[RMDB]
Source: RMDB library RFMREP, as collected in RNAgym. An RNA of 177 nucleotides, treated with 2A3 and DMS and read out base by base. For 2A3 the reverse transcriptase was SuperScript II with manganese.
RNA sequence: GGGAACGACUCGAGUAGAGUCGAAAAUUCUAGGGAUCAGUCCUAUAGUACGUAUCACCAGGACGUCAAACAAACUAGACCCUGGCUAACCCACCGCGAUGAUGAUCAGUGCGGCCUAGUCCUGAGCGAUUAAGACUCUGUUCGCAGAGUCUUAAUCAAAAGAAACAACAACAACAAC
Reactivity to 2A3 in 0.01 (KOAc 150mM, MgCl2 10mM, bicine 150mM(pH8.5), 24C), signal-to-noise 3, nucleotides 027 to 126: u060u000c010u030a010g050g000g030a070u090c040a010g070u030c000c000u070a060u050a140g100u080a030c110g070u070a070u190c050a030c120c020a010g070g000a020c020g020u010c020a010a140a130c030a030a180a010c030u010a050g020a010c020c000c000u010g000g000c010u040a100a100c000c010c020a010c000c030g030c060g040a080u100g010a040u070g030a010u120c020a010g060u040g100c020g010g000c020c010u020a010g040u040c000c020u090g100a070g100c050
Reactivity to DMS in 0.01 (KOAc 150mM, MgCl2 10mM, bicine 150mM(pH8.5), 24C), signal-to-noise 3, nucleotides 027 to 126: u010u000c030u000a050g020g000g010a080u000c110a110g000u000c020c040u000a090u000a110g010u010a070c190g010u000a080u000c110a140c110c100a060g010g000a030c060g010u010c050a100a070a160c220a100a100a080c060u000a120g010a090c020c000c000u020g010g020c130u020a030a120c060c030c050a120c030c030g020c060g000a100u000g000a110u000g000a100u000c050a070g030u000g010c060g000g000c070c020u000a060g000u020c040c050u000g010a120g010c170